This 177-nucleotide RNA was probed chemically with 2A3 and DMS. The 2A3 profile rests on 15,521 reads. Conditions: 150 mM KOAc, 10 mM MgCl2 and 150 mM bicine (pH 8.5), 24 C. DMS adducts were read by reverse transcription with MarathonRT. 2A3 adducts were read by reverse transcription with SuperScript II with manganese. Values cover nucleotides 27 to 126.
RNA sequence: GGGAACGACUCGAGUAGAGUCGAAAACUUCCAGCGUUCGCGCUGGAAGAAAGGCCGAGUAGUGUUGGGUCGCGAAACGCCAUAAAUCAACAAUCACUCAGAAAAUCGGUAUCUUCGGAUACCGAAAGUAUAUUGUUAUCUUCGGAUAACAAUAUACAAAAGAAACAACAACAACAAC
Reactivity to 2A3 in 0.01 (KOAc 150mM, MgCl2 10mM, bicine 150mM(pH8.5), 24C), signal-to-noise 8, nucleotides 027 to 126: c000u000u000c000c000a000g000c010g030u080u100c180g010c000g000c100u010g010g010a000a000g010a020a020a000g020g000c000c010g010a010g010u040a010g000u010g100u160u090g090g050g050u160c030g000c010g040a070a040a010c020g000c000c010a030u170a040a100a040u130c030a010a080c020a030a080u150c050a030c070u050c020a030g140a110a090a010a100u030c010g000g000u000a000u000c000u020u060c210g110g000a000u000a000c000c000g000a000a000a000
Reactivity to DMS in 0.01 (KOAc 150mM, MgCl2 10mM, bicine 150mM(pH8.5), 24C), signal-to-noise 6, nucleotides 027 to 126: c010u000u000c000c000a010g010c000g040u010u020c220g020c010g030c000u000g000g010a010a000g010a040a110a140g010g010c020c020g010a050g020u000a080g010u000g010u010u000g010g010g020u010c040g020c020g000a090a090a120c300g000c010c040a100u000a050a090a070u010c060a030a080c070a090a080u000c110a050c040u010c040a080g010a070a040a110a080u000c000g000g000u010a000u000c010u000u010c190g020g000a010u000a000c000c000g000a000a010a060